[RMDB]
Annotation: Conditions: 150 mM KOAc, 10 mM MgCl2 and 150 mM bicine (pH 8.5), 24 C. Chemical mapping of a 207-nucleotide RNA with 2A3 and DMS. For 2A3 the reverse transcriptase was SuperScript II with manganese.

RNA sequence: GGGAACGACUCGAGUAGAGUCGAAAAGUUCCCUCUUAGCGCGGAGGUUUAACUACGCUCGUUCCCCAUAUCGGUGUGGGCGCACCGGAUUUAUAAAUCAAAGUCCUUUAGGGAACGGAAAGGAACAAAAAUCCAUGGGAGUUCGCUCCCAUGGAAACAAUAUAACGGUCUUCGGACCGUUAUAUUGAAAAGAAACAACAACAACAAC
Reactivity to 2A3 in 0.01 (KOAc 150mM, MgCl2 10mM, bicine 150mM(pH8.5), 24C), signal-to-noise 1, nucleotides 027 to 156: g000u000u050c000c000c000u010c030u000u100a000g020c020g000c010g050g030a040g020g100u100u140u180a090a080c030u040a010c040g020c020u040c000g010u000u010c000c000c000c000a030u150a080u090c000g030g000u000g000u030g020g010g000c050g000c020a000c000c000g000g000a010u020u300u010a190u150a110a030a010u090c130a030a020a000g020u010c020c000u010u030u090a030g000g010g000a030a000c020g000g000a100a050a010g050g010a030a020c030a040a040a030a050a080u020c000c000a000u000g000g010g000a020g010u040u060c140g030c050u010c000c010c000a000u000g000g010a000a000a000
Reactivity to DMS in 0.01 (KOAc 150mM, MgCl2 10mM, bicine 150mM(pH8.5), 24C), signal-to-noise 2, nucleotides 027 to 156: g050u000u000c010c010c000u000c060u010u000a050g030c090g010c000g010g010a100g010g000u000u000u000a100a100c030u010a020c010g000c030u000c000g000u000u010c010c000c010c070a180u010a100u000c010g020g010u000g030u000g030g040g040c080g000c020a020c010c010g010g000a180u000u000u000a080u000a070a050a090u000c100a030a080a050g040u000c020c020u000u010u000a080g010g020g010a030a050c010g010g010a090a070a080g000g010a050a090c060a030a060a080a100a170u000c000c020a030u000g000g010g010a060g030u000u010c300g020c020u000c000c000c000a020u000g010g010a010a010a050